[RMDB]
RNA sequence: GGGAACGACUCGAGUAGAGUCGAAAAGGCGGCGUGCCGGGCGCGUGGCCAAGACCCGGACAAGGUCGUCAGGACGUUCCAUCACGCGCCGAUGAGCGCGAGAUUCCGCUCGCUACCGGCCGGAGACCUCUGUAAUCAUCUUCGGAUGAUUACAGAGAAAAGAAACAACAACAACAAC
Reactivity to 2A3 in 0.01 (KOAc 150mM, MgCl2 10mM, bicine 150mM(pH8.5), 24C), signal-to-noise 3, nucleotides 027 to 126: g030g010c020g010g010c050g090u100g010c020c000g020g000g000c050g000c010g050u130g070g030c030c000a020a040g050a090c010c000c020g000g040a080c080a060a060g130g030u050c010g040u060c030a020g020g080a060c090g020u080u000c030c010a020u030c030a010c000g020c030g000c000c010g030a180u120g020a030g030c040g000c080g010a020g020a080u210u030c020c010g000c030u020c010g010c000u050a090c010c020g010g030c010c030g040g040a070g020a050c010
Reactivity to DMS in 0.01 (KOAc 150mM, MgCl2 10mM, bicine 150mM(pH8.5), 24C), signal-to-noise 4, nucleotides 027 to 126: g010g020c020g010g020c020g020u010g030c010c040g000g010g010c040g010c070g010u010g010g000c120c070a090a090g000a090c010c000c000g000g010a110c130a110a110g010g010u000c020g010u000c090a120g010g010a200c080g000u000u000c020c010a150u000c020a050c000g010c070g000c010c010g000a080u010g000a080g010c050g000c030g000a050g000a180u010u000c060c040g010c010u000c030g000c060u010a110c060c010g000g000c040c020g000g000a120g000a150c170